[RMDB]
RNA sequence: GGGAACGACUCGAGUAGAGUCGAAAACAUUCUUGAAAAAGUGAUGUAGAUUUAUAGCCCAUAACUUUUUUGAAUUACAGCGACGAUACGGCGUCGAAAGAAAAAUAAAUAGACCGUAUGAAAGAAAAAAACAACAGUAGCUUCGGCUACUGUUGAAGAUGUAACCUCAGUUCGCUGAGGUUACAUCAAAAGAAACAACAACAACAAC
Reactivity to 2A3 in 0.01 (KOAc 150mM, MgCl2 10mM, bicine 150mM(pH8.5), 24C), signal-to-noise 1, nucleotides 027 to 156: c000a030u040u040c010u000u050g000a000a000a000a080a000g030u010g010a010u000g010u020a140g110a100u100u300u190a250u250a070g030c000c000c000a010u140a140a000c090u110u060u070u000u020u140g060a080a090u140u130a240c070a130g020c010g000a000c000g000a010u000a000c000g000g000c010g010u000c000g000a050a050a000g030a010a110a000a000a020u110a010a060a030u090a060g030a010c000c000g010u000a000u000g040a000a140a040g090a030a120a020a040a040a000a000c000a000a000c010a000g000u000a000g010c020u040u050c300g100g000c000u000a000c000u000g000u000u000g000a000a010
Source information: An RNA of 207 nucleotides, treated with 2A3 and read out base by base. The 2A3 profile rests on 586 reads.